[RMDB]
RNA sequence: GGGAACGACUCGAGUAGAGUCGAAAACUUUUAGCUUUAAACCGAGGUCAGAAACUGUCACAGAAACUUAAGUUCUUUGGCGGGUUAGAUGAAUCUAAUCCAUGGUCAUCCACUUUAUAAAUACAUACUCAUGGUAACAAUUCGUUGUUACCAUGAGAAAAGAAACAACAACAACAAC
Reactivity to DMS in 0.01 (KOAc 150mM, MgCl2 10mM, bicine 150mM(pH8.5), 24C), signal-to-noise 3, nucleotides 027 to 126: c090u000u040u030u000a140g000c030u010u000u020a040a090a040c070c010g000a080g020g000u000c040a040g000a040a060a060c020u000g000u020c020a030c060a070g000a060a050a100c110u020u020a130a140g000u010u010c010u000u000u000g020g030c060g000g010g010u020u000a050g010a090u020g020a110a050u000c010u000a050a040u010c020c030a090u020g010g010u000c030a030u000c040c030a050c120u000u010u000a120u030a100a070a050u030a080c090a110u010a140
Reactivity to 2A3 in 0.01 (KOAc 150mM, MgCl2 10mM, bicine 150mM(pH8.5), 24C), signal-to-noise 7, nucleotides 027 to 126: c000u070u060u090u160a030g040c020u060u060u150a050a050a010c030c030g030a050g030g020u040c020a010g080a070a100a060c030u050g030u070c010a030c010a050g090a060a070a020c030u130u130a160a070g040u050u030c030u030u060u020g020g000c010g000g020g000u020u030a020g010a030u080g090a130a100u030c010u020a040a030u000c020c010a060u110g060g020u040c020a040u020c030c000a060c040u060u150u050a110u090a070a110a000u210a050c060a010u100a020
Structure probing data (DMS and 2A3) for a 177-nucleotide construct. DMS adducts were read by reverse transcription with MarathonRT. Reactivities are given for positions 27 through 126.